Record summary
Conditions: 150 mM KOAc, 10 mM MgCl2 and 150 mM bicine (pH 8.5), 24 C. An RNA of 307 nucleotides, treated with DMS and 2A3 and read out base by base. Source: RMDB library POS240, as collected in RNAgym. For 2A3, 7,508 sequencing reads were counted. For DMS, 4,179 sequencing reads were counted. DMS adducts were read by reverse transcription with MarathonRT. For 2A3 the reverse transcriptase was SuperScript II with manganese.
RNA sequence: GGGAACGACUCGAGUAGAGUCGAAAAGCUGAGCGUGAGCUCAGCACGCCAACUACGGUUGGCGAACUCUAGCUACGGCUAGAGACGAUUGGCGUACGCGCCAAUCGACAUCGACUUCGGUCGAUGAACCGGAGCGUGAGCUCCGGACAGGAUACUACGGUAUCCUGAACAUCUACGUACGCGUAGAUGAACGCCAAAAUCCAAUUAAAGUUUGGGACCUAGGCGGGCCUCUUACGAGGCUAACUUAUCGACAAUAAGUUAGGUCUAGUUGAUUCUUCGGAAUCAACAAAAGAAACAACAACAACAAC
Reactivity to DMS in 0.01 (KOAc 150mM, MgCl2 10mM, bicine 150mM(pH8.5), 24C), signal-to-noise 1, nucleotides 027 to 266: g000c010u000g010a020g010c000g000u010g000a250g010c000u010c020a000g000c010a050c080g000c000c010a010a040c000u000a160c160g000g000u030u000g000g000c000g010a060a050c000u000c000u000a010g010c000u000a120c210g030g000c010u000a000g020a010g010a110c040g020a030u030u010g020g000c000g100u050a120c130g000c000g010c000c000a020a000u000c020g010a300c010a000u000c030g010a010c000u010u030c180g030g000u000c000g010a000u000g010a170a140c010c000g000g000a000g000c000g020u030g000a170g010c000u000c030c010g030g000a060c040a020g000g010a000u000a000c010u010a100c230g060g000u000a010u000c000c000u000g030a270a300c030a000u000c000u000a020c000g010u000a060c160g030c000g030u000a010g000a010u010g000a070a040c000g000c000c000a020a000a000a160u040c000c010a000a000u010u000a060a210a120g010u010u000u000g020g000g000a000c010c000u000a030g000g020c000g030g060g050c020c000u010c000u050u030a160c260g000a000g000g000c000u000a020a000c010u000u000a010u000c070g030a230c300a100a090u010a000a000g000u000u000a030g000g000u000c030u000a060
Reactivity to 2A3 in 0.01 (KOAc 150mM, MgCl2 10mM, bicine 150mM(pH8.5), 24C), signal-to-noise 5, nucleotides 027 to 266: g000c000u000g000a000g010c010g030u110g070a010g000c000u000c000a000g000c000a010c000g010c000c000a010a000c000u040a020c300g150g010u000u000g000g000c020g000a140a080c000u000c000u000a000g000c020u030a040c280g170g010c000u000a000g000a000g010a010c030g000a000u010u000g000g010c000g000u050a070c300g030c000g010c090c000a000a000u000c000g020a010c000a000u000c000g000a000c000u050u020c190g100g000u000c000g010a010u000g040a060a030c010c000g000g000a000g010c030g040u080g070a030g020c010u010c000c000g010g000a000c000a000g000g000a000u000a000c010u010a010c220g120g000u010a000u000c000c000u000g000a030a010c000a010u000c000u000a000c010g020u020a030c300g020c000g140u000a000g000a000u000g110a170a040c010g000c000c010a010a000a010a020u060c010c000a020a010u080u090a200a100a140g110u040u020u010g010g010g000a000c000c000u010a080g000g020c000g010g000g010c020c010u050c010u150u170a090c180g010a010g010g010c000u010a000a000c000u000u010a010u090c100g210a030c050a080a040u000a000a000g000u000u010a000g000g000u000c000u010a000